An RNA of 307 nucleotides, treated with DMS and 2A3 and read out base by base.

RNA sequence: GGGAACGACUCGAGUAGAGUCGAAAACAGUGACGUGAGUCACUGAAGAUCGGUCUACGGACCGAUCAAGUUGGCGUACGCGCCAACACAUGUCUUCUUCGGAAGACAUGACCGAGGCGUGAGCCUCGGACACUACAACUACGGUUGUAGUGAACUGUACGACGUGAGUCGUACAGAAGUAGAUCACGUGAGUGAUCUACACGGAUGCGUGAGCAUCCGCGCCUCAUGGUGGUGGCUGGGGGCAGCCUCAUGGUGGUGGCUGGGGUAACAUGCAGUUCGCUGCAUGUAAAAGAAACAACAACAACAAC
Reactivity to DMS in 0.01 (KOAc 150mM, MgCl2 10mM, bicine 150mM(pH8.5), 24C), signal-to-noise 6, nucleotides 027 to 266: c010a010g010u000g000a010c010g000u030g000a240g000u000c000a010c000u000g000a110a130g000a010u000c010g010g000u000c000u010a130c210g010g010a010c000c000g000a000u000c000a020a070g010u000u000g000g000c000g030u010a090c260g040c020g010c000c000a010a010c030a300c020a010u000g000u000c000u000u000c000u000u030c140g010g010a020a000g000a000c000a000u000g010a100c010c010g000a020g000g000c010g010u010g000a260g020c010c000u000c000g010g000a160c010a010c000u000a000c000a000a000c000u000a100c190g030g010u000u000g000u000a000g000u000g010a060a170c000u000g000u000a010c000g000a020c000g010u010g000a060g010u000c000g000u000a010c000a000g000a070a080g010u000a010g000a010u000c000a000c010g000u020g010a120g020u000g000a010u000c000u000a000c000a160c060g000g000a000u000g000c000g000u030g000a300g010c000a010u000c000c000g020c240g000c060c040u000c070a050u010g010g020u010g000g000u000g010g010c080u010g010g010g000g000g010c100a100g010c030c030u000c070a090u020g000g010u000g000g010u010g010g000c070u000g000g000g010g010u010a120
Reactivity to 2A3 in 0.01 (KOAc 150mM, MgCl2 10mM, bicine 150mM(pH8.5), 24C), signal-to-noise 8, nucleotides 027 to 266: c000a000g000u000g000a000c020g130u160g100a060g020u010c000a000c000u010g000a030a000g000a000u010c000g010g020u000c010u030a090c300g090g000a000c000c000g000a000u000c000a000a020g010u010u000g010g000c010g000u040a050c280g020c010g000c110c010a000a000c050a010c000a000u000g000u000c000u020u010c000u030u040c180g120g000a010a000g000a000c000a000u000g020a010c000c010g000a000g000g000c030g030u090g060a020g010c000c000u000c000g000g000a000c000a000c000u000a000c000a010a000c000u020a020c260g160g000u000u000g000u000a000g000u000g000a040a030c000u000g000u000a000c000g000a000c000g040u040g050a030g000u000c000g000u000a000c000a000g000a070a010g000u000a000g000a000u000c000a000c030g070u070g100a050g010u000g000a020u000c000u000a000c020a000c020g000g010a000u010g000c030g050u160g070a050g010c000a000u000c010c000g000c030g010c000c010u100c030a080u110g050g060u070g040g080u120g070g000c100u090g030g000g000g020g030c020a020g050c010c010u060c020a050u110g060g060u090g040g060u080g060g000c090u070g020g000g000g020u030a030